Background: Conditions: 150 mM KOAc, 10 mM MgCl2 and 150 mM bicine (pH 8.5), 24 C. Structure probing data (2A3 and DMS) for a 177-nucleotide construct. Source: RMDB library RFMREP, as collected in RNAgym.
RNA sequence: GGGAACGACUCGAGUAGAGUCGAAAACGCUUGAUGAUCUGGUCACGCCGCUGGCCCACAAGGCCACCGAUAUGCGCACUAGAGGAAACCAACGGCUCAGGCCGGGCGGGUCCCGCGCAGUUUUCCCCACGAUCCUAUAGUUCGCUAUAGGAUCGUGAAAAGAAACAACAACAACAAC
Reactivity to 2A3 in 0.01 (KOAc 150mM, MgCl2 10mM, bicine 150mM(pH8.5), 24C), signal-to-noise 1, nucleotides 027 to 126: c010g040c030u020u020g010a030u020g030a120u220c060u140g070g030u020c010a000c060g030c000c010g000c010u020g010g000c000c030c030a050c010a050a030g030g000c000c000a010c000c000g040a080u040a080u260g000c030g000c010a040c110u090a080g010a100g210g010a060a070a050c000c000a020a010c000g000g000c030u040c120a100g130g000c000c000g000g050g040c200g060g000g000u010c030c010c010g010c000g010c000a000g000u030u000u060u000c000c000c000
Reactivity to DMS in 0.01 (KOAc 150mM, MgCl2 10mM, bicine 150mM(pH8.5), 24C), signal-to-noise 2, nucleotides 027 to 126: c110g010c050u000u000g000a080u000g000a130u010c060u000g010g010u000c060a040c120g040c030c050g000c170u000g020g030c050c000c040a090c280a120a300g000g000c040c030a030c050c050g010a090u000a080u010g020c020g040c210a130c140u000a100g000a130g000g000a060a060a050c030c030a110a060c020g000g000c000u000c230a150g000g010c000c000g030g000g000c130g020g010g000u000c010c020c050g030c070g020c010a050g010u000u000u000u000c000c010c010